[RMDB]
Source information:
Conditions: 150 mM KOAc, 10 mM MgCl2 and 150 mM bicine (pH 8.5), 24 C. The record gives the reactivity of an RNA of 177 nucleotides to 2A3.
RNA sequence: GGGAACGACUCGAGUAGAGUCGAAAACCUAUAGUCUCAGCUACUUGGGAAGCUGAGGUGGUAGGAUUGCUUGAGUCCAGGAGUUCGAGGCUGCAGCAUGCUAUGAUCACACUGUACUCCAGCCUGGGUGCCCUGGGUCAUUCGUGACCCAGGGCACAAAAGAAACAACAACAACAAC
Reactivity to 2A3 in 0.01 (KOAc 150mM, MgCl2 10mM, bicine 150mM(pH8.5), 24C), signal-to-noise 2, nucleotides 027 to 126: c030c000u030a070u040a120g020u000c000u000c000a000g000c000u060a050c010u300u300g080g000g160a130a000g000c000u000g000a000g000g000u060g030g020u000a000g020g040a190u080u100g030c000u060u060g000a000g000u000c000c000a020g020g040a030g000u050u070c000g090a030g060g020c000u030g020c140a150g050c050a140u290g000c000u040a050u240g000a050u050c010a010c020a020c100u000g030u050a030c000u020c020c040a000g000c000c030u060g010g050

The 2A3 profile rests on 715 reads.